Annotation:
Source: RMDB library TTRDES, as collected in RNAgym. An RNA of 177 nucleotides, treated with 2A3 and DMS and read out base by base. 2A3 adducts were read by reverse transcription with SuperScript II with manganese. DMS adducts were read by reverse transcription with MarathonRT. The 2A3 profile rests on 7,590 reads. Values cover nucleotides 27 to 126. The DMS profile rests on 4,771 reads. The RNA was probed in 150 mM KOAc, 10 mM MgCl2 and 150 mM bicine (pH 8.5) at 24 C.
[RMDB]
RNA sequence: GGGAACGACUCGAGUAGAGUCGAAAAGAUAUGGAGUAUGUAGGGAGCUCCAUUCGGAAACGAAUGAAGAGCUUUGAUCUACCUACUCCUAAGUCAAAACCUUAGCUCGCUUCGGCGAGCUAAGGAAGAAAUAGAUAUAGUUCGCUAUAUCUAUUUCAAAAGAAACAACAACAACAAC
Reactivity to 2A3 in 0.01 (KOAc 150mM, MgCl2 10mM, bicine 150mM(pH8.5), 24C), signal-to-noise 3, nucleotides 027 to 126: g010a000u000a010u060g000g000a000g000u010a000u020g010u000a010g040g080g300a010g020c000u020c000c000a000u000u000c000g000g010a050a020a000c010g020a020a020u080g060a280a240g000a000g040c000u160u190u300g150a070u010c010u010a000c010c000u000a010c010u000c000c000u010a000a000g010u010c010a030a040a120a290c000c000u000u000a000g010c030u020c050g030c020u060u090c300g150g020c000g020a010g020c000u000a000a000g000g000a000a040
Reactivity to DMS in 0.01 (KOAc 150mM, MgCl2 10mM, bicine 150mM(pH8.5), 24C), signal-to-noise 3, nucleotides 027 to 126: g000a010u000a100u020g000g000a020g020u000a000u000g010u000a010g010g000g000a050g020c010u000c000c010a020u000u000c000g010g000a020a000a060c000g010a030a000u000g000a190a180g010a020g010c000u000u000u010g010a140u000c000u000a000c000c070u000a000c000u000c000c010u000a000a050g000u010c020a160a100a170a230c000c000u000u010a000g020c000u010c000g010c010u000u020c300g030g000c000g020a010g000c000u000a000a010g000g000a020a040